RNA sequence: GGGAACGACUCGAGUAGAGUCGAAAACUUUCCAAGUAUUCCUUUGAUGUUUCCCAGCCAGGGAUUUUCCUCCUCUAGUUUCUUGAGUUUCUUCUUGGUCUUCCGGAGGUCCCUCUCGAGCUCUUCCAUAUCCCAGGGUUCGCCCUGGGAAAAAGAAACAACAACAACAAC
Reactivity to 2A3 in 0.01 (KOAc 150mM, MgCl2 10mM, bicine 150mM(pH8.5), 24C), signal-to-noise 3, nucleotides 027 to 129: c010u070u090u060c000c040a010a010g030u020a080u060u140c000c000u090u060u070g030a040u090g050u030u040u020c000c000c000a020g050c040c040a020g000g000g020a060u060u050u060u030c000c000u000c000c020u020c000u020a030g050u010u140u030c010u030u040g060a060g050u010u040u050c020u060u000c010u020u030g010g000u000c010u050u010c010c000g020g010a000g000g070u040c010c000c010u000c000u020c000g020a000g000c020u020c000u020u000c000c010a040u040a060
Reactivity to DMS in 0.01 (KOAc 150mM, MgCl2 10mM, bicine 150mM(pH8.5), 24C), signal-to-noise 1, nucleotides 027 to 129: c120u020u010u030c050c000a060a100g040u040a150u030u030c000c000u000u000u000g020a120u000g040u000u020u030c040c060c010a000g070c040c040a160g000g000g000a010u020u020u030u030c000c000u010c000c040u000c000u050a090g020u030u020u000c040u090u090g030a220g010u000u000u000c010u030u000c080u000u060g000g000u010c060u020u050c000c000g000g030a000g000g030u020c050c020c060u040c040u020c000g020a050g030c030u020c040u040u000c030c000a100u000a000